[RMDB]
Chemical mapping of a 177-nucleotide RNA with DMS and 2A3.
The 2A3 profile rests on 1,652 reads.
RNA sequence: GGGAACGACUCGAGUAGAGUCGAAAAGAUAUGGAAAGAACUACGGAGGUAGUGACGUUGAAAUCGGAAACGAUGGAGUCAUGUUCUCCGCUUUCCUAAGUCAAAGUCGUACCUUCGGGUACGACAAGGGUGUAUCACGGUUCGCCGUGAUACACCCAAAAGAAACAACAACAACAAC
Reactivity to DMS in 0.01 (KOAc 150mM, MgCl2 10mM, bicine 150mM(pH8.5), 24C), signal-to-noise 1, nucleotides 027 to 126: g080a000u010a300u000g010g000a000a000a010g010a160a050c140u020a300c020g000g000a000g000g010u010a260g010u000g000a010c000g010u010u030g020a100a210a040u000c040g000g000a140a030a200c010g010a010u010g000g000a130g000u000c000a000u000g000u010u000c020u000c000c010g000c000u000u050u000c000c000u000a000a100g000u000c030a100a100a070g000u000c000g000u010a000c000c000u000u030c170g010g010g000u010a000c010g030a000c000a010a090
Reactivity to 2A3 in 0.01 (KOAc 150mM, MgCl2 10mM, bicine 150mM(pH8.5), 24C), signal-to-noise 2, nucleotides 027 to 126: g020a020u080a020u140g030g020a000a000a030g020a160a050c190u200a060c300g030g010a020g080g040u180a040g050u040g000a000c030g140u280u120g030a080a080a010u010c000g020g000a040a040a030c020g010a010u020g040g010a020g020u020c010a010u080g240u300u030c070u010c000c000g000c010u040u020u010c000c000u050a150a040g060u020c000a040a060a040g030u010c000g020u010a000c020c040u000u040c300g050g020g000u020a030c050g010a000c000a000a000